RNA sequence: GGGAACGACUCGAGUAGAGUCGAAAAUUGACAUUCGUGUCAAGGGUAGAUAUGGAAGCGAGGUAGCGCAUACCACUAUGGUUCUCGGAAACGAGAACCACGAAUGGUAUGAACUACGCUACGCGCUUCCUAAGUCAGGGUGCGUUUUCGAACGCAAAGUGAGUACGUUUUUCGAAACGUACUCACUAAAAGAAACAACAACAACAAC
Reactivity to DMS in 0.01 (KOAc 150mM, MgCl2 10mM, bicine 150mM(pH8.5), 24C), signal-to-noise 2, nucleotides 027 to 156: u000u000g010a040c020a090u000u000c260g020u010g010u000c010a010a070g010g010g020u010a060g020a040u000a080u010g000g010a040a010g040c010g000a060g010g010u000a010g030c010g010c000a020u000a020c000c000a030c070u000a060u000g000g010u000u000c000u010c010g060g000a030a030a100c000g020a010g000a000a000c000c000a000c010g020a010a000u000g000g010u000a010u010g000a040a110c080u010a260c020g010c000u000a020c000g010c010g000c000u010u000c000c000u000a010a060g010u010c010a150g000g000g020u000g000c000g010u000u020u000u010c160g000a070a040c020g030c040a010a080
Reactivity to 2A3 in 0.01 (KOAc 150mM, MgCl2 10mM, bicine 150mM(pH8.5), 24C), signal-to-noise 4, nucleotides 027 to 156: u030u000g000a000c020a020u040u060c300g100u110g000u050c010a010a010g090g000g090u230a110g020a000u010a020u050g000g000a010a000g000c010g000a020g300g120u010a000g000c000g000c000a000u000a000c000c010a010c060u010a010u010g010g000u000u000c000u000c000g010g000a000a010a000c000g000a010g000a000a000c000c000a000c000g010a260a300u010g000g000u000a000u000g000a000a020c040u180a060c100g000c000u000a000c000g000c000g000c000u000u000c000c000u000a010a000g000u000c020a010g070g070g030u130g010c040g010u010u000u020u130c170g080a010a000c010g000c000a050a050